[RMDB]
RNA sequence: GGGAACGACUCGAGUAGAGUCGAAAAAUAAUGAGAUCAAACCUUCAGGUCUAAAAACCAUGGUUGUGUCUGCGGGUCAAGAGCAAACUAACUGUAAUACUAGUUCCUUAGCUUAUUACGAACCUGUCCAUCCGAUAGUUCGCUAUCGGAAAAAGAAACAACAACAACAAC
Reactivity to DMS in 0.01 (KOAc 150mM, MgCl2 10mM, bicine 150mM(pH8.5), 24C), signal-to-noise 7, nucleotides 027 to 129: a040u060a080a050u070g010a070g000a040u000c070a010a020a010c060c030u040u030c140a110g010g020u030c040u070a030a060a070a070a060c020c040a080u040g000g030u000u000g030u000g000u040c040u000g000c070g030g040g000u030c110a070a070g040a030g030c000a020a010a030c090u040a050a080c140u020g000u050a050a100u040a110c040u030a060g020u030u040c080c070u000u000a100g020c050u060u040a000u020u020a080c080g010a100a060c080c070u000g040u000c010c070a140
Reactivity to 2A3 in 0.01 (KOAc 150mM, MgCl2 10mM, bicine 150mM(pH8.5), 24C), signal-to-noise 9, nucleotides 027 to 129: a000u280a020a070u180g070a020g010a040u110c080a020a050a100c000c010u120u120c090a040g010g020u020c070u170a070a040a000a010a000c020c020a040u090g060g000u020u050g030u030g020u050c010u020g010c030g020g000g010u060c030a060a040g010a010g070c030a070a020a040c020u050a040a020c040u080g090u200a030a060u040a150c080u020a010g030u050u080c020c020u060u040a020g000c030u060u040a040u060u050a130c050g030a040a030c020c010u030g040u030c020c020a050